[RMDB]
RNA sequence: GGGAACGACUCGAGUAGAGUCGAAAAUCUUCGGUUUCGAGCGGCAGGAAGCCCCCGGUGCGCAUCCAGCUUGAAACACGCCCCGCCCCGGCGUUGUAGGCGGCUGCGGCAAGGCCCCAAUUGCCGACAGCACCCUUUUAUUCGUAAAAGGGUGCUGAAAAGAAACAACAACAACAAC
Reactivity to DMS in 0.01 (KOAc 150mM, MgCl2 10mM, bicine 150mM(pH8.5), 24C), signal-to-noise 3, nucleotides 027 to 126: u010c080u000u000c140g020g010u000u000u000c010g010a030g020c030g000g030c230a080g010g000a080a070g010c020c010c030c130c130g010g020u010g030c190g020c040a060u000c030c020a120g020c010u000u000g010a030a050a030c030a160c050g000c050c030c020c070g000c010c000c010c080g000g000c040g020u010u010g030u000a050g010g000c170g000g000c020u010g010c030g000g000c020a020a030g000g010c030c030c020c050a090a130u000u000g010c020c010g000a250
Reactivity to 2A3 in 0.01 (KOAc 150mM, MgCl2 10mM, bicine 150mM(pH8.5), 24C), signal-to-noise 2, nucleotides 027 to 126: u030c030u100u210c090g080g020u020u030u030c010g010a020g010c020g100g000c180a100g040g040a050a030g010c010c010c020c030c120g300g050u210g020c100g010c030a030u000c010c000a030g010c020u020u010g000a010a000a030c020a010c020g010c010c000c000c010g020c010c000c010c000g040g000c110g150u140u130g010u020a050g010g040c050g000g030c050u100g080c020g000g020c000a020a020g050g020c010c000c000c060a020a010u030u010g010c020c020g000a010